[RMDB]
RNA sequence: GGGAACGACUCGAGUAGAGUCGAAAAGAAAAAGACGUGGAAGUACAGAAACGGCAAUGUACUGAAGACAUGAGUGAGAUACGAAAGUAUCGAAAUGCCGUAAACUCUUGUCUGACACGUCGAAAAAGGGUAUAUAUUGCUUCGGCAAUAUAUACCCAAAAGAAACAACAACAACAAC
Reactivity to 2A3 in 0.01 (KOAc 150mM, MgCl2 10mM, bicine 150mM(pH8.5), 24C), signal-to-noise 5, nucleotides 027 to 126: g130a000a090a000a020a000g010a000c010g000u010g030g040a080a040g000u000a010c020a020g080a060a180a010c010g010g000c020a020a050u040g000u000a000c020u060g050a020a000g000a000c000a010u020g000a000g010u040g040a070g000a010u000a000c000g030a070a060a060g000u010a000u000c010g000a070a150a130u140g000c000c000g000u010a130a010a000c000u000c000u020u030g000u000c000u000g010a010c000a000c000g000u010c000g010a040a000a000a000a000
Reactivity to DMS in 0.01 (KOAc 150mM, MgCl2 10mM, bicine 150mM(pH8.5), 24C), signal-to-noise 4, nucleotides 027 to 126: g020a070a090a080a150a130g000a010c000g010u020g050g000a190a010g000u000a020c000a010g000a120a080a100c000g010g000c020a090a300u000g000u000a000c020u000g010a100a020g000a000c020a010u000g000a010g020u010g010a300g000a010u000a000c000g000a110a040a130g030u000a000u000c000g000a090a110a150u000g000c000c000g030u020a070a020a000c000u000c000u000u000g000u000c010u010g000a150c000a030c040g000u000c000g000a010a060a040a080a100